[RMDB]
RNA sequence: GGGAACGACUCGAGUAGAGUCGAAAAAGAAGCUCACAGCUGACAUUCCAUAGGCGCUCAGCUGUUUUGUUAUUUCGGGCCCUUGGAGACACCCAGGUCCUCUUGCAGUCACUGGAGGGCAGAGAAAGACAGUAAAUUCCAGGAAUGAGAAUUAGCAAAACAGGGUUUAUUUCGAUAAACCCUGUUUAAAAGAAACAACAACAACAAC
Reactivity to 2A3 in 0.01 (KOAc 150mM, MgCl2 10mM, bicine 150mM(pH8.5), 24C), signal-to-noise 1, nucleotides 027 to 156: a010g090a020a000g060c010u010c030a010c020a000g000c000u000g000a010c000a030u030u150c000c080a060u140a130g130g010c030g030c140u020c030a010g000c030u000g020u010u110u010u060g010u010u040a110u020u010u100c040g000g040g000c000c050c000u000u040g050g000a090g000a040c030a070c000c020c000a020g000g070u030c000c030u050c010u000u020g010c080a070g040u030c030a080c160u050g050g020a020g030g000g030c010a030g020a010g000a040a080a000g040a020c020a030g060u110a080a060a100u060u000c000c000a000g020g080a030a030u090g050a030g050a110a110u300u300a070g080c300a010
Reactivity to DMS in 0.01 (KOAc 150mM, MgCl2 10mM, bicine 150mM(pH8.5), 24C), signal-to-noise 2, nucleotides 027 to 156: a120g030a130a090g040c040u000c110a070c080a080g030c020u000g030a030c050a170u000u000c020c080a110u000a110g030g000c070g030c110u010c020a150g000c020u010g010u010u030u010u000g020u000u010a050u000u000u000c010g000g010g030c030c030c010u000u020g000g010a100g000a090c010a100c020c080c000a140g000g030u000c040c010u010c010u000u000g010c010a200g020u000c080a160c040u010g030g000a080g000g030g030c030a060g000a100g000a100a040a110g000a090c050a090g000u000a090a040a110u000u000c020c010a080g030g020a080a090u000g010a210g000a080a070u000u020a150g010c040a120